[RMDB]
RNA sequence: GGGAACGACUCGAGUAGAGUCGAAAAGGCGGGAUAGGGCUCUUGCAUGGAUUCGGCCAUGAUCUCAUUGACGGUUGCAAAGUCAUUCAGGUCCGUCAGAAAGAUGGUCAGCUUCACGGCACCGCCAUCCCAUGCCUCAGUUCGCUGAGGCAUGGGAAAAAGAAACAACAACAACAAC
Reactivity to DMS in 0.01 (KOAc 150mM, MgCl2 10mM, bicine 150mM(pH8.5), 24C), signal-to-noise 1, nucleotides 027 to 126: g000g040c000g030g010g010a150u000a090g020g000g010c020u000c050u010u000g000c070a060u000g010g000a130u010u000c160g000g010c000c000a020u000g030a060u010c010u030c150a180u010u000g000a040c030g000g020u040u020g000c110a110a090a150g020u000c140a100u000u000c130a010g020g000u000c000c000g020u000c050a030g000a080a070a080g000a020u000g000g020u000c040a130g000c150u000u000c070a100c100g000g000c020a110c030c000g000c000c030a140
Reactivity to 2A3 in 0.01 (KOAc 150mM, MgCl2 10mM, bicine 150mM(pH8.5), 24C), signal-to-noise 1, nucleotides 027 to 126: g000g000c000g000g000g050a090u130a120g240g150g000c040u050c000u130u160g060c060a070u120g010g080a070u090u140c070g040g000c000c020a010u040g000a120u000c000u010c020a080u010u080g010a020c040g050g050u050u000g100c150a190a170a170g150u260c090a010u080u120c010a030g000g190u130c000c010g020u000c010a000g020a000a070a000g080a060u040g020g000u000c000a020g040c040u040u120c060a040c080g000g040c010a040c020c010g000c000c000a010

Source: RMDB library OK2TRN, as collected in RNAgym.
Structure probing data (DMS and 2A3) for a 177-nucleotide construct.
The RNA was probed in 150 mM KOAc, 10 mM MgCl2 and 150 mM bicine (pH 8.5) at 24 C.